[RMDB]
RNA sequence: GGGAACGACUCGAGUAGAGUCGAAAAAGACAGUAUUGCAUCGCCCCGGUCAGAUCAACGGAAAUCAGAUAAGUGCUCUGGGUCUGGUCCAAAAGGUUAGCAGCUAGAACACAGGUGCACAUUAUAUGUGUGCCUCUGCGAGUGCAAUAUGUGCGUCCCCGGUGUAUAACUUCGGUUAUACACCGGGAAAAGAAACAACAACAACAAC
Reactivity to 2A3 in 0.01 (KOAc 150mM, MgCl2 10mM, bicine 150mM(pH8.5), 24C), signal-to-noise 2, nucleotides 027 to 156: a000g040a030c020a010g010u010a010u010u000g000c000a010u030c060g010c000c010c020c040g000g010u020c000a000g030a040u010c070a130a240c080g030g020a030a100a030u080c010a060g110a260u240a300a060g090u060g050c020u010c000u020g010g000g000u050c000u000g000g040u130c020c000a050a150a000a000g050g000u110u150a010g010c020a000g020c050u200a100g070a300a020c120a030c040a060g000g010u020g040c000a000c010a020u110u240a120u190a060u240g020u010g000u000g050c000c000u020c020u020g000c020g010a040g000u020g000c020a010a000u000a010u070g050u050g020c030g010u040c020

Source: RMDB library OK3TST, as collected in RNAgym. The record gives the reactivity of an RNA of 207 nucleotides to 2A3. Reactivities are rounded to 0.1 and cut off at 0 and 3. The reactions ran in a buffer of 150 mM KOAc, 10 mM MgCl2 and 150 mM bicine (pH 8.5), at 24 C. Values cover nucleotides 27 to 156.